Conditions: 150 mM KOAc, 10 mM MgCl2 and 150 mM bicine (pH 8.5), 24 C. The record gives the reactivity of an RNA of 177 nucleotides to DMS and 2A3. The 2A3 profile rests on 1,819 reads. It was measured as part of the RMDB library 15KREP.
RNA sequence: GGGAACGACUCGAGUAGAGUCGAAAACAAACCAUAUGCUACAAGGAUAGUGUGUUUUAUGUUGUAAAGAAUAGUACAGCUUUUCCAUUUGAAACACUUUCAGCAUGUCGUGCGUAUUUGGAUUCACCACAUCACAUCACUUCGGUGAUGUGAUGUGAAAAGAAACAACAACAACAAC
Reactivity to DMS in 0.01 (KOAc 150mM, MgCl2 10mM, bicine 150mM(pH8.5), 24C), signal-to-noise 2, nucleotides 027 to 126: c040a040a180a100c050c070a030u010a030u000g000c020u000a110c120a110a160g020g000a060u000a030g030u000g020u030g000u000u000u000u000a010u000g010u010u010g000u000a020a030a050g000a070a070u000a140g000u020a070c160a060g000c010u000u000u000u010c070c030a050u000u020u000g020a060a050a030c020a010c020u000u000u000c030a040g020c040a050u010g000u010c130g030u000g010c220g030u000a080u000u000u030g000g000a170u010u000c060a080c130
Reactivity to 2A3 in 0.01 (KOAc 150mM, MgCl2 10mM, bicine 150mM(pH8.5), 24C), signal-to-noise 2, nucleotides 027 to 126: c010a020a040a020c000c020a000u030a000u070g010c010u020a040c020a120a060g180g000a070u050a070g080u050g000u000g040u020u100u000u020a060u030g020u060u000g040u040a020a050a050g010a120a090u110a090g140u010a050c010a040g050c000u050u020u050u000c010c000a030u030u020u170g050a030a040a000c040a020c000u020u050u070c030a040g020c010a040u030g020u040c040g030u030g020c010g020u030a120u020u060u060g080g020a080u080u070c000a030c030
Values cover nucleotides 27 to 126.